Structure probing data (DMS and 2A3) for a 177-nucleotide construct. DMS adducts were read by reverse transcription with MarathonRT. For 2A3 the reverse transcriptase was SuperScript II with manganese.
RNA sequence: GGGAACGACUCGAGUAGAGUCGAAAAAUGUAGAGCGACACAAACGAAGGGCGGCUGUGCUCGAACGUCAGGUCGCAGCGAGAAGAGCUGCAACCGCCGCCGCGACUUGCCGAGACAGCGCGAAGCAUAGUAUCAGGAUCUUCGGAUCCUGAUACUAAAAAGAAACAACAACAACAAC
Reactivity to DMS in 0.01 (KOAc 150mM, MgCl2 10mM, bicine 150mM(pH8.5), 24C), signal-to-noise 4, nucleotides 027 to 126: a040u020g020u020a060g010a030g000c030g010a080c100a080c140a030a080a130c090g000a070a030g020g010g000c000g010g020c050u010g000u020g030c000u000c030g020a250a150c060g000u030c010a040g000g000u000c000g010c000a040g020c000g000a130g020a180a150g020a170g020c010u010g010c090a090a090c040c050g010c160c020g010c010c030g040c020g030a010c010u000u000g010c050c020g000a110g000a240c290a030g000c020g010c020g000a100a110g010c050a170
Reactivity to 2A3 in 0.01 (KOAc 150mM, MgCl2 10mM, bicine 150mM(pH8.5), 24C), signal-to-noise 6, nucleotides 027 to 126: a000u200g050u130a070g010a020g080c020g030a030c040a000c020a120a220a020c070g080a090a020g040g070g000c010g020g040c030u040g020u100g090c010u010c010g060a140a030c050g150u140c030a000g030g010u020c020g000c020a000g000c000g010a070g060a230a060g040a040g040c080u110g030c080a050a040c040c050g010c020c000g000c010c000g000c000g000a010c000u000u030g010c020c010g010a030g000a010c010a020g020c020g020c000g090a040a020g030c020a060